[RMDB]
RNA sequence: GGGAACGACUCGAGUAGAGUCGAAAAGAUAUGGAUGAGGUUACAAAGGCUGCGCAUUAUCUCGGAAACGAGCCGAGAUGCGAACUACAGCUCCUCAUCCUAAGUCAAAGCACAGUUCGCUGUGCAACGUACAUCUGAAGUUCGCUUCAGAUGUACGAAAAGAAACAACAACAACAAC
Reactivity to DMS in 0.01 (KOAc 150mM, MgCl2 10mM, bicine 150mM(pH8.5), 24C), signal-to-noise 5, nucleotides 027 to 126: g010a050u000a300u000g010g010a000u000g010a010g010g010u000u000a110c110a050a080a090g010g000c000u000g000c020g010c010a080u000u000a080u000c000u000c000g000g000a080a100a140c300g010a130g020c070c020g000a020g010a020u000g010c020g000a050a030c120u010a240c020a030g000c010u000c000c000u010c010a020u000c000c010u010a020a060g000u000c030a100a080a100g010c010a010c010a010g010u000u010c300g030c000u000g020u010g000c000a040a050
Reactivity to 2A3 in 0.01 (KOAc 150mM, MgCl2 10mM, bicine 150mM(pH8.5), 24C), signal-to-noise 8, nucleotides 027 to 126: g030a020u060a020u140g010g000a000u000g010a000g040g030u230u200a140c120a100a130a030g150g000c000u040g030c020g000c010a010u130u110a150u240c010u000c010g030g050a160a300a190c190g050a130g110c020c010g020a020g000a020u010g000c000g000a030a020c100u210a070c140a000g000c010u050c010c000u000c000a000u000c000c000u000a050a010g000u000c040a120a080a010g010c010a000c000a000g010u110u180c230g020c140u000g010u010g000c010a010a010